An RNA of 207 nucleotides, treated with 2A3 and read out base by base. For 2A3, 598 sequencing reads were counted.
[RMDB]
RNA sequence: GGGAACGACUCGAGUAGAGUCGAAAAAGAAAGUGGGAGCUACAGGAUGAAACUGACAGGCAAGGGAUGCUGAAUUAUGGUCGUCUUGUAAAAUUUAAUACCACAUUUCUCAGCUUUAAAGUAUUAAACCUACCAAAAACACUAAACCUGCAUCCCAACCGCAGAAAUGAUUCGUCAUUUCUGCGGUAAAAGAAACAACAACAACAAC
Reactivity to 2A3 in 0.01 (KOAc 150mM, MgCl2 10mM, bicine 150mM(pH8.5), 24C), signal-to-noise 1, nucleotides 027 to 156: a000g030a000a000a000g000u010g000g010g020a090g080c110u040a030c020a000g030g030a010u040g010a120a040a000c030u070g070a020c010a060g000g070c100a080a050g000g000g000a000u000g000c000u010g020a090a050u220u170a050u280g010g010u040c010g000u000c010u050u010g000u030a150a150a030a000u030u280u120a080a140u080a000c020c000a000c000a020u040u060u000c050u010c010a040g000c020u090u110u250a040a110a020g000u000a060u050u190a020a090a060c000c020u010a000c060c060a000a000a000a230a040c030a050c110u120a050a060a060c000c000u030g020c000a050u000c020c000c000a000
2A3 adducts were read by reverse transcription with SuperScript II with manganese.